[RMDB]
RNA sequence: GGGAACGACUCGAGUAGAGUCGAAAAGAAGAUGAUGUGUAGGAUAGGUGCGAGGCUUUGAAGUGUGGACGCCAGUCUGCAUGGAGCCGACCUUGAAAUACCACCCUUUAAUGAAAAACAAAUACAAGUAGAGUCAAAAGUUCGCUUUUGACUCUACAAAAGAAACAACAACAACAAC
Reactivity to 2A3 in 0.01 (KOAc 150mM, MgCl2 10mM, bicine 150mM(pH8.5), 24C), signal-to-noise 1, nucleotides 027 to 126: g020a060a000g070a040u120g030a030u020g160u020g020u060a020g030g020a000u000a020g050g010u090g270c230g190a160g060g030c030u270u260u040g030a050a050g000u000g000u000g010g020a000c010g000c070c020a030g010u000c000u010g030c000a030u010g010g000a000g000c010c000g020a020c000c000u000u000g000a030a020a010u020a010c010c000a010c000c010c050u020u060u120a120a190u150g090a060a060a010a020a010c070a030a110a000u170a080c030a150a000
Reactivity to DMS in 0.01 (KOAc 150mM, MgCl2 10mM, bicine 150mM(pH8.5), 24C), signal-to-noise 2, nucleotides 027 to 126: g000a110a070g000a050u010g020a020u000g040u000g040u000a030g020g000a200u000a000g000g030u000g060c160g010a110g010g040c010u000u010u000g020a130a200g000u000g030u000g000g050a010c020g010c200c230a100g000u000c010u000g000c000a000u000g020g000a020g000c000c000g000a060c030c000u010u000g000a100a160a050u000a010c030c010a040c020c040c020u000u010u000a060a120u010g000a040a040a060a050a050c130a080a040a080u020a050c170a060a130